An RNA of 177 nucleotides, treated with DMS and 2A3 and read out base by base. Conditions: 150 mM KOAc, 10 mM MgCl2 and 150 mM bicine (pH 8.5), 24 C. DMS adducts were read by reverse transcription with MarathonRT. Source: RMDB library TTRDEL, as collected in RNAgym.
RNA sequence: GGGAACGACUCGAGUAGAGUCGAAAAGAUAUGGACUGUUGGACGCUACUACCCACCUCGGAAACGAGAGGUAGACCCGUCCACUCAGUCCUAAGUCAAAAGUACUUAAACUUCGGUUUAAGUACAAGCUUCAUCUAAGGUUCGCCUUAGAUGAAGCAAAAGAAACAACAACAACAAC
Reactivity to DMS in 0.01 (KOAc 150mM, MgCl2 10mM, bicine 150mM(pH8.5), 24C), signal-to-noise 3, nucleotides 027 to 126: g000a040u000a300u000g000g010a010c000u000g010u000u000g020g000a020c000g000c240u000a300c000u000a000c000c010c000a120c180c010u000c010g000g010a090a120a120c000g000a030g000a040g000g000u000a000g000a170c280c300c000g010u000c010c000a000c150u000c000a000g020u000c000c000u000a000a100g020u000c010a120a050a100a100g040u000a010c000u000u000a000a000a020c010u000u000c230g030g010u000u000u000a010a000g000u000a000c000a030a060
Reactivity to 2A3 in 0.01 (KOAc 150mM, MgCl2 10mM, bicine 150mM(pH8.5), 24C), signal-to-noise 2, nucleotides 027 to 126: g010a000u070a050u140g010g010a000c000u000g020u030u000g010g020a010c020g040c080u180a160c010u000a000c100c010c030a190c060c000u010c010g020g050a080a080a060c010g000a010g010a020g020g000u010a000g000a020c020c010c000g000u000c000c000a000c010u010c000a010g000u030c010c000u000a070a020g020u000c050a010a000a080a180g000u000a000c000u010u000a020a010a000c010u040u100c260g150g000u010u000u000a010a010g000u000a000c000a010a020